RNA sequence: GGGAACGACUCGAGUAGAGUCGAAAAUUACAUAAGUCUAACACCUUGUUUCGGACUAACAAGGACGCAUGGAGGAUGGCCGUUCCUCCAUAGUUAGACGUCCGAGAACCAGCCGAAAUGAAAAAGAAUUUAGUACUAGCUUCGGCUAGUACUAAAUAAAAGAAACAACAACAACAAC
Reactivity to DMS in 0.01 (KOAc 150mM, MgCl2 10mM, bicine 150mM(pH8.5), 24C), signal-to-noise 5, nucleotides 027 to 126: u000u020a070c140a100u050a040a100g020u020c040u000a050a080c090a170c090c040u000u000g000u000u010u000c030g000g020a060c060u020a070a100c040a030a160g000g010a060c050g010c110a030u000g000g010a010g000g010a050u020g000g000c080c070g010u000u010c000c010u010c000c010a020u000a010g020u020u010a100g020a210c000g030u000c030c020g010a190g000a090a150c120c150a060g020c020c020g000a030a020a020u000g000a040a090a080a100a120g000a100
Reactivity to 2A3 in 0.01 (KOAc 150mM, MgCl2 10mM, bicine 150mM(pH8.5), 24C), signal-to-noise 6, nucleotides 027 to 126: u200u100a080c070a070u240a110a060g040u020c010u050a060a030c050a080c050c010u010u040g030u020u020u030c080g100g060a180c060u070a060a010c030a020a040g020g000a040c040g030c060a000u010g020g000a000g010g010a020u070g070g080c060c040g040u050u010c000c000u000c000c010a000u000a000g000u000u030a040g030a080c000g010u010c000c010g060a040g010a060a050c040c030a010g010c000c010g020a050a040a030u110g060a100a090a010a010a020g170a030